Notes: This 207-nucleotide RNA was probed chemically with 2A3 and DMS. The data come from the RNA Mapping Database (RMDB), library OK3TST. The 2A3 profile rests on 453 reads. The reactions ran in a buffer of 150 mM KOAc, 10 mM MgCl2 and 150 mM bicine (pH 8.5), at 24 C.
[RMDB]
RNA sequence: GGGAACGACUCGAGUAGAGUCGAAAAAAUUACCCACAGGUUACUGGGUAGAUUUCUGUGUCUCCCUGAUCUGGACCUUGACUGGUCACUGUAUUACUAGAUAAUAGUAUGCUUUGGGACGCCAGUGAAGAGAAGUUAAUACAGAUGCUUCUCAACAUAUGAAAAUAAUAUUCGUAUUAUUUUCAUAAAAAGAAACAACAACAACAAC
Reactivity to 2A3 in 0.01 (KOAc 150mM, MgCl2 10mM, bicine 150mM(pH8.5), 24C), signal-to-noise 1, nucleotides 027 to 156: a000a000u120u110a080c020c020c000a000c000a000g040g070u030u080a110c140u270g080g010g030u300a050g000a060u270u280u170c120u180g200u040g020u160c000u000c000c000c030u000g000a060u040c010u030g000g100a090c030c000u060u090g060a010c000u010g010g050u140c040a000c000u040g000u010a060u150u100a030c000u000a000g130a280u230a220a040u010a150g010u010a030u020g000c000u040u060u090g030g010g030a030c060g010c030c000a020g000u020g100a160a030g000a010g010a090a000g000u010u130a180a030u110a210c010a000g160a040u100g000c000u020u000c000u010c010a010a020c020a050
Reactivity to DMS in 0.01 (KOAc 150mM, MgCl2 10mM, bicine 150mM(pH8.5), 24C), signal-to-noise 1, nucleotides 027 to 156: a050a140u030u000a080c000c010c000a160c030a110g020g020u000u010a020c060u000g020g020g040u010a010g010a060u010u000u000c100u020g030u000g010u000c040u000c010c010c010u010g060a040u010c030u010g030g030a080c080c040u000u010g000a060c000u010g000g000u020c020a040c030u000g000u000a030u010u010a010c030u000a030g060a220u000a090a120u000a030g010u010a030u010g010c040u000u000u000g030g020g020a060c060g030c020c010a000g030u010g000a060a080g010a070g010a090a050g000u000u020a080a130u000a170c060a110g020a190u000g000c010u000u000c000u030c030a020a180c080a240